Chemical mapping of a 207-nucleotide RNA with 2A3. The data come from the RNA Mapping Database (RMDB), library OK3TST. The 2A3 profile rests on 529 reads.
[RMDB]
RNA sequence: GGGAACGACUCGAGUAGAGUCGAAAAAAAAUGCCAACUGCUGUCACGUAGACUUCAGACGUGCGUAACAUUUGGUGCCAAAGACCCAGGACAGGGGGACUCCUUUGGGAGACUGGUCCCCUGUCCUCACCCUCACUCCAUGAGGAGAUCCACCUAAGACGUAUACGACUUUCGAGUCGUAUACGUCAAAAGAAACAACAACAACAAC
Reactivity to 2A3 in 0.01 (KOAc 150mM, MgCl2 10mM, bicine 150mM(pH8.5), 24C), signal-to-noise 1, nucleotides 027 to 156: a000a000a000a000u120g000c000c000a020a000c110u030g000c050u160g220u300c010a010c000g020u020a030g050a300c060u160u050c260a100g000a110c010g030u000g000c010g040u040a040a010c000a010u010u000u030g020g000u000g030c030c000a060a120a020g070a080c000c000c000a000g000g010a000c000a000g000g000g020g020g030a030c000u010c020c020u160u260u220g150g060g020a000g050a030c080u090g010g070u130c000c000c000c000u000g000u000c000c000u000c010a010c010c010c000u010c000a040c010u030c100c040a070u240g010a020g090g030a030g010a070u110c030c010a050c090c030u190a080a130
Conditions: 150 mM KOAc, 10 mM MgCl2 and 150 mM bicine (pH 8.5), 24 C.